The record gives the reactivity of an RNA of 207 nucleotides to 2A3 and DMS. Conditions: 150 mM KOAc, 10 mM MgCl2 and 150 mM bicine (pH 8.5), 24 C. For 2A3 the reverse transcriptase was SuperScript II with manganese. The data come from the RNA Mapping Database (RMDB), library ARCHII. DMS adducts were read by reverse transcription with MarathonRT. For DMS, 13,002 sequencing reads were counted.
RNA sequence: GGGAACGACUCGAGUAGAGUCGAAAAGUAGGUAGAUUUAGUGCGGAAGUAACGAACAGGGUACUGCGUGAGGCCGGUUACGGAGCAACGAAAACCUGUCUACGAUGAUAGACCUGGGUUGAUAUGGAUGUCAAGUUAAUACCUAUGCUAGUAUUGGGAUUAAAUACUAGUUCGCUAGUAUUUAAUCAAAAGAAACAACAACAACAAC
Reactivity to 2A3 in 0.01 (KOAc 150mM, MgCl2 10mM, bicine 150mM(pH8.5), 24C), signal-to-noise 5, nucleotides 027 to 156: g060u040a000g000g010u010a010g010a120u050u080u110a100g010u120g130c010g020g040a030a030g030u030a070a030c050g000a040a020c020a020g010g000g050u110a100c030u060g060c010g020u060g110a030g000g040c030c040g000g010u010u020a020c030g030g020a080g070c090a080a080c020g050a070a010a000a060c010c000u010g000u000c000u000a010c030g050a040u100g040a060u060a050g040a020c000c020u000g050g020g000u020u030g030a070u040a040u140g050g000a010u030g010u040c020a010a040g010u010u070a090a050u020a060c010c000u030a040u100g070c060u100a080g070u080a220u080u200g090g020
Reactivity to DMS in 0.01 (KOAc 150mM, MgCl2 10mM, bicine 150mM(pH8.5), 24C), signal-to-noise 5, nucleotides 027 to 156: g030u010a060g010g020u000a030g010a090u000u000u000a140g020u010g010c040g000g010a290a150g000u000a040a060c030g030a060a080c030a100g020g000g010u000a080c040u000g010c070g020u000g030a150g020g030c020c030g020g030u000u000a140c040g010g010a230g010c050a070a100c050g010a090a070a050a040c010c010u010g000u000c010u000a030c040g010a150u010g000a200u000a040g000a100c000c050u000g010g020g020u000u010g000a090u000a080u000g000g010a230u000g010u000c040a040a070g020u000u000a040a070u000a050c030c020u000a060u000g010c020u000a090g030u000a080u000u000g010g010